An RNA of 177 nucleotides, treated with DMS and 2A3 and read out base by base.
The reactions ran in a buffer of 150 mM KOAc, 10 mM MgCl2 and 150 mM bicine (pH 8.5), at 24 C.

RNA sequence: GGGAACGACUCGAGUAGAGUCGAAAAACGGUUAAGCCGGGAAAACAGCGGCUAGUUUAGGAGGGAAGAAAACCCUUGGGCAAACGCCCAAAGCCUGCGUAUAUUCCGGCCGGAGCAUCCUGGCGCCAUCUGAUUCGAAUUUCGAUUCGAAUCAGAUAAAAGAAACAACAACAACAAC
Reactivity to DMS in 0.01 (KOAc 150mM, MgCl2 10mM, bicine 150mM(pH8.5), 24C), signal-to-noise 3, nucleotides 027 to 126: a110c090g000g000u030u010a110a170g030c000c000g000g010g020a030a080a100a090c300a100g030c020g010g000c010u010a050g000u030u010u030a090g010g000a080g000g000g000a130a120g020a100a090a110a090c050c020c000u000u000g000g000g020c000a080a160a080c240g000c030c010c000a060a070a030g010c010c000u020g040c030g000u010a090u000a180u020u020c000c000g000g000c000c010g000g000a070g000c080a090u000c020c000u010g000g010c040g000c080c060
Reactivity to 2A3 in 0.01 (KOAc 150mM, MgCl2 10mM, bicine 150mM(pH8.5), 24C), signal-to-noise 5, nucleotides 027 to 126: a010c030g020g030u110u100a050a010g000c000c000g000g000g040a040a110a000a020c050a040g050c000g010g000c010u010a070g040u050u110u100a110g050g050a040g010g020g010a090a070g110a170a190a090a140c010c000c000u030u040g010g000g000c110a270a270a090c150g000c020c000c000a050a000a010g020c000c030u170g000c030g010u090a050u010a030u130u030c000c000g000g000c000c000g010g010a020g010c010a040u040c000c010u020g010g010c030g010c010c010